[RMDB]
RNA sequence: GGGAACGACUCGAGUAGAGUCGAAAAUGUUAGCUUUGAGCGUUCGCUUAACCGAAUGAUCGAAGCAGGCGUAGACGGCCUGUUUACGCUUGGAUCUUCUGGCGAAGUUGCGUUUAGCACAGAUAAGAUAUCGCACUGAUUUCGAUCAGUGCGAUAUAAAAGAAACAACAACAACAAC
Reactivity to DMS in 0.01 (KOAc 150mM, MgCl2 10mM, bicine 150mM(pH8.5), 24C), signal-to-noise 3, nucleotides 027 to 126: u010g020u000u010a090g020c010u000u000u000g020a000g010c010g020u000u000c300g020c030u000u000a110a090c160c040g000a040a020u000g010a010u000c000g010a090a070g030c020a010g000g020c000g020u000a000g030a030c030g010g000c300c100u000g000u000u000u000a010c000g000c010u000u000g000g000a050u000c030u010u000c010u000g040g000c200g000a060a060g000u000u000g010c050g010u000u000u010a050g030c040a070c070a070g000a150u000a060a140g010
Reactivity to 2A3 in 0.01 (KOAc 150mM, MgCl2 10mM, bicine 150mM(pH8.5), 24C), signal-to-noise 2, nucleotides 027 to 126: u090g000u060u080a070g040c000u060u070u120g060a020g010c000g010u050u110c200g040c030u070u070a070a020c000c050g040a060a050u190g010a000u030c000g050a030a020g150c010a020g010g010c000g020u010a010g010a020c010g300g210c060c060u070g010u000u000u000a010c010g020c000u010u030g040g000a000u010c000u020u010c030u110g040g030c010g060a030a030g070u150u100g010c010g030u080u030u050a000g010c040a020c010a060g080a030u150a130a070g100